Chemical mapping of a 207-nucleotide RNA with 2A3.
The RNA was probed in 150 mM KOAc, 10 mM MgCl2 and 150 mM bicine (pH 8.5) at 24 C.
RNA sequence: GGGAACGACUCGAGUAGAGUCGAAAAGCUGCUACCGGGGCGAGGGUGUUUAGCCCUUGGAACCGCAGUUGGUUCCUCGGAACUAAACUCGUGGUUCCUGUGGUACACACCUGACCUCCUGUGCAGAAAAGAAAAAAGAUAGGCGGCUCGGAGGAGCGAACUUCACUCAGUUCGCUGAGUGAAGUUCAAAAGAAACAACAACAACAAC
Reactivity to 2A3 in 0.01 (KOAc 150mM, MgCl2 10mM, bicine 150mM(pH8.5), 24C), signal-to-noise 1, nucleotides 027 to 156: g040c000u000g000c040u080a020c020c040g000g020g000g000c010g000a010g010g020g010u010g020u040u100u190a100g030c000c000c000u010u060g000g000a000a010c000c000g000c000a010g010u030u030g000g020u000u000c000c000u000c160g100g010a000a000c010u150a300a030a000c000u090c250g000u010g000g000u000u030c000c010u000g110u140g010g000u040a040c010a000c010a000c030c000u010g020a030c010c000u010c000c000u010g000u000g010c010a000g020a050a090a000a010g080a000a090a010a010a010a000g060a090u120a090g100g060c080g010g020c020u020c030g020g110a070g000g030a020g010c040